The data come from the RNA Mapping Database (RMDB), library M2PK50. An RNA of 177 nucleotides, treated with 2A3 and DMS and read out base by base. For 2A3, 6,546 sequencing reads were counted. For 2A3 the reverse transcriptase was SuperScript II with manganese. Conditions: 150 mM KOAc, 10 mM MgCl2 and 150 mM bicine (pH 8.5), 24 C.
RNA sequence: GGGAACGACUCGAGUAGAGUCGAAAAGUUUGCGGGUUCGCCCGCAAACAAAGAAAAGAUCGAAAGAUCAUGGCAGAAACGGAGCCAAAUCCGUAAAAUAAAAAAUCCUGUCCUUCGGGACAGGAAACAUAUACGUAAUCUUCGGAUUACGUAUAUGAAAAGAAACAACAACAACAAC
Reactivity to 2A3 in 0.01 (KOAc 150mM, MgCl2 10mM, bicine 150mM(pH8.5), 24C), signal-to-noise 3, nucleotides 027 to 126: g000u010u000u000g010c000g030g000g030u020u090c180g070c040c010c010g010c010a000a000a000c000a000a000a010g040a000a120a010a010g010a010u020c010g040a030a040a040g000a000u010c020a080u080g010g000c010a000g150a090a160a010c000g000g020a000g010c020c060a110a020a010u020c000c010g010u030a010a080a030a080u220a020a090a010a010a000a040u020c000c000u010g000u000c000c000u030u040c220g100g010g000a000c000a000g000g000a000a010a000
Reactivity to DMS in 0.01 (KOAc 150mM, MgCl2 10mM, bicine 150mM(pH8.5), 24C), signal-to-noise 5, nucleotides 027 to 126: g000u010u000u010g010c000g020g000g020u000u020c220g030c000c000c000g000c000a000a000a010c000a080a090a120g000a100a080a130a090g000a010u000c010g000a140a070a190g000a010u000c010a090u010g000g020c070a080g010a080a090a030c010g000g000a010g010c000c130a060a090a060u000c010c000g020u000a060a060a080a110u030a020a050a070a080a090a100u000c000c000u000g000u000c000c000u000u010c190g020g010g010a000c000a000g000g000a000a020a050